RNA sequence: GGGAACGACUCGAGUAGAGUCGAAAAGCUAGCACUCUGAUCCUAGUACCGAUCUAGGUACUCUAGUACUAUCGAUCAUGCACUACAGGAUCGUAUAUGCUAGGAUCUGAUCUAUCAUGUAUACAGGGAUGACAACAAACUUCGGUUUGUUGUCAUCAAAAGAAACAACAACAACAAC
Reactivity to DMS in 0.01 (KOAc 150mM, MgCl2 10mM, bicine 150mM(pH8.5), 24C), signal-to-noise 4, nucleotides 027 to 126: g010c050u000a010g010c040a060c060u010c110u010g000a020u000c000c010u000a030g010u000a030c120c270g000a070u010c070u010a300g010g000u000a000c000u010c190u000a070g010u010a020c070u000a070u000c270g000a000u000c010a070u000g000c080a070c210u000a110c160a060g000g010a010u000c000g000u020a080u010a090u000g000c000u010a010g030g000a040u010c020u000g000a060u000c050u000a090u010c080a110u000g000u000a080u010a120c160a150g010g010
Reactivity to 2A3 in 0.01 (KOAc 150mM, MgCl2 10mM, bicine 150mM(pH8.5), 24C), signal-to-noise 3, nucleotides 027 to 126: g070c010u000a010g000c010a020c040u080c070u070g010a010u020c010c000u000a040g010u020a020c050c060g020a040u010c000u060a040g050g000u020a010c040u050c030u110a070g000u000a000c020u040a060u100c050g010a020u010c020a030u120g070c080a030c100u190a050c060a070g010g020a010u000c000g010u030a090u010a010u070g000c000u000a000g000g000a010u010c010u030g020a040u010c010u080a140u110c050a130u180g140u140a110u060a130c060a020g220g030